[RMDB]
RNA sequence: GGGAACGACUCGAGUAGAGUCGAAAACGCGGUUCUUCUUCGACCCCGAGCGGCUCAUCUCGGCAAGAGGGCGGCAGUCCUGGAACUCUUACUCUUUUCUGUAAAGAGGAGUCCGUGGACUCGUCGCCCCAAGCCCGAGGAUCAGCGCCCGAGAGGGACCUGGUAUAGGUUUCGACCUAUACCAGGUAAAAGAAACAACAACAACAAC
Reactivity to 2A3 in 0.01 (KOAc 150mM, MgCl2 10mM, bicine 150mM(pH8.5), 24C), signal-to-noise 1, nucleotides 027 to 156: c090g030c110g030g000u070u010c010u040u010c020u100u080c150g060a060c000c050c000c000g000a040g050c080g260g000c000u010c020a040u000c020u000c000g010g000c010a010a110g110a260g030g010g000c040g020g000c000a010g000u010c010c000u000g010g060a210a210c010u010c010u150u200a180c020u040c000u000u140u160u050c210u280g240u300a050a000a000g010a010g010g000a000g010u000c030c020g130u080g000g000a000c000u000c030g000u000c000g000c000c000c000c010a000a000g000c010c000c000g000a040g030g060a020u040c020a020g030c000g000c010c020c000g080a090g090a150g040g000g000
This 207-nucleotide RNA was probed chemically with 2A3.
Values are in units of 0.01, from 0 to 300, in steps of 10.
2A3 adducts were read by reverse transcription with SuperScript II with manganese.
The data come from the RNA Mapping Database (RMDB), library VIROID.
The RNA was probed in 150 mM KOAc, 10 mM MgCl2 and 150 mM bicine (pH 8.5) at 24 C.